[RMDB]
RNA sequence: GGGAACGACUCGAGUAGAGUCGAAAACGUACGUGGAGACACGUACGACGAGACUUCGGUCUCGAAUCGCGCGAACUGGUGCUGCGCGCGCGCGAGGCGUCGGUGGUCGGCGAGCCCACGGACGCAAAAAUUCGCGCGCAAAUAAAUAGCAUUAGAAUAAAUAGUACGAGUUCGCUCGUACUAUUUAAAAAGAAACAACAACAACAAC
Reactivity to 2A3 in 0.01 (KOAc 150mM, MgCl2 10mM, bicine 150mM(pH8.5), 24C), signal-to-noise 4, nucleotides 027 to 156: c010g000u000a000c010g000u010g010g020a040g010a020c000a000c000g000u010a000c000g010a030c000g000a000g000a000c010u100u150c300g070g000u000c010u000c000g010a030a090u150c070g000c000g010c000g020a120a100c020u010g020g000u000g010c000u010g000c020g000c000g000c000g010c000g000c000g010a020g010g010c010g000u010c100g180g010u010g000g010u020c030g000g120c170g080a030g000c020c010c000a010c020g060g000a010c000g000c010a120a120a030a000a050u070u000c000g000c000g000c000g000c000a000a010a010u160a000a020a020u120a010g000c000a000u030u040a020g040a050a070
Reactivity to DMS in 0.01 (KOAc 150mM, MgCl2 10mM, bicine 150mM(pH8.5), 24C), signal-to-noise 3, nucleotides 027 to 156: c030g020u000a000c010g100u000g010g020a300g020a300c000a020c000g040u000a000c000g010a150c030g000a300g010a020c000u010u000c180g040g030u010c010u000c000g030a010a040u010c040g030c030g010c070g020a110a130c150u010g020g020u010g010c000u000g030c020g010c090g000c010g010c010g000c030g000a050g030g000c030g030u000c010g030g080u000g000g000u000c050g010g010c140g030a290g010c240c000c000a030c000g010g010a040c010g010c010a000a020a040a040a140u000u000c000g020c000g020c010g030c040a040a070a070u000a090a070a100u000a100g050c030a090u010u010a100g000a250a270
Annotation: Chemical mapping of a 207-nucleotide RNA with 2A3 and DMS. For DMS, 4,881 sequencing reads were counted. The RNA was probed in 150 mM KOAc, 10 mM MgCl2 and 150 mM bicine (pH 8.5) at 24 C. In probing experiments dimethyl sulfate is read out at A N1 and C N3, which are open when not base-paired. Values cover nucleotides 27 to 156.